[RMDB]
RNA sequence: GGGAACGACUCGAGUAGAGUCGAAAAACAUAUUACGAUAUGAUUCAGAUGGUGUCUUACUGGUUCGUACCAAGGGACAUAAUGGUUUCUUGUUUCCAGCCAAAGAACAAGUGGCGAGCCUGAAUAAAAAACUGACUGCCGUUCGCGGCAGUCAGAAUCAGGUAUAACAGUUCGCUGUUAUACCUGAAAAAGAAACAACAACAACAAC
Reactivity to 2A3 in 0.01 (KOAc 150mM, MgCl2 10mM, bicine 150mM(pH8.5), 24C), signal-to-noise 4, nucleotides 027 to 156: a000c040a020u140a030u090u150a050c100g040a030u020a010u120g070a060u050u150c070a060g090a210u120g070g060u050g010u030c020u030u100a110c040u070g020g030u020u130c080g090u150a050c000c030a020a030g010g000g010a010c010a010u130a090a080u100g040g000u000u020u010c000u020u000g000u020u030u000c020c030a040g020c030c020a100a040a010g030a060a020c020a050a040g010u010g070g010c040g010a020g000c000c020u040g060a080a030u120a130a110a020a010a020a030c000u010g000a000c000u000g030c020c010g030u030u050c230g000c010g110g020c000a000g000u000c000a000g000a000a000
Reactivity to DMS in 0.01 (KOAc 150mM, MgCl2 10mM, bicine 150mM(pH8.5), 24C), signal-to-noise 1, nucleotides 027 to 156: a090c050a070u020a040u010u000a060c100g030a220u000a080u020g020a110u000u000c040a060g000a080u020g030g030u000g000u000c080u020u000a060c080u010g000g000u000u000c110g000u000a140c070c010a070a090g000g000g000a030c050a120u010a040a120u000g010g000u000u000u000c010u000u000g000u000u000u000c000c000a150g030c050c090a080a050a070g010a060a060c030a030a090g000u010g020g030c030g000a110g000c030c020u000g010a090a100u040a010a040a040a070a050a160c010u000g010a030c020u000g000c000c010g040u000u010c300g020c050g010g040c010a000g020u000c010a000g000a020a050
Annotation:
Conditions: 150 mM KOAc, 10 mM MgCl2 and 150 mM bicine (pH 8.5), 24 C. Structure probing data (2A3 and DMS) for a 207-nucleotide construct. It was measured as part of the RMDB library M2RFPK.